Chemical mapping of a 177-nucleotide RNA with 2A3 and DMS. The RNA was probed in 150 mM KOAc, 10 mM MgCl2 and 150 mM bicine (pH 8.5) at 24 C. 2A3 adducts were read by reverse transcription with SuperScript II with manganese. The DMS profile rests on 2,803 reads. DMS adducts were read by reverse transcription with MarathonRT.
[RMDB]
RNA sequence: GGGAACGACUCGAGUAGAGUCGAAAAUCGACUUCCUUCGGGAAGUCGAAAAUAACGGUCGGCUCAUGAAGCUAGUCGAACAUCCUGCUCGACCUAGACUAAAAAGAAUCUCGUUCGCGAGAUUCAACCUAAAUUUUAUGUUCGCAUAAAAUUUAGGAAAAGAAACAACAACAACAAC
Reactivity to 2A3 in 0.01 (KOAc 150mM, MgCl2 10mM, bicine 150mM(pH8.5), 24C), signal-to-noise 3, nucleotides 027 to 126: u000c000g000a000c000u000u000c000c000u000u010c130g080g000g000a010a000g000u010c000g000a000a000a010a000u060a020a020c030g020g010u010c000g010g000c020u000c050a130u200g060a060a020g020c030u020a030g040u040c010g010a010a030c010a060u070c000c030u020g010c020u030c020g030a040c020c000u010a050g040a080c040u120a100a050a030a030a030g000a000a000u000c000u000c010g040u070u060c300g000c000g050a000g000a000u010u010c000a010a010
Reactivity to DMS in 0.01 (KOAc 150mM, MgCl2 10mM, bicine 150mM(pH8.5), 24C), signal-to-noise 3, nucleotides 027 to 126: u010c000g020a010c000u010u000c000c000u000u010c210g030g000g000a010a010g020u000c000g000a000a020a060a070u020a080a110c190g000g000u000c000g010g000c010u000c040a100u010g000a120a080g000c030u000a080g000u000c010g000a030a020c050a060u010c060c020u000g000c060u000c000g000a020c030c050u010a100g020a070c040u000a010a040a070a110a120g000a030a010u000c000u000c000g020u000u010c170g020c020g010a010g010a010u000u000c000a040a110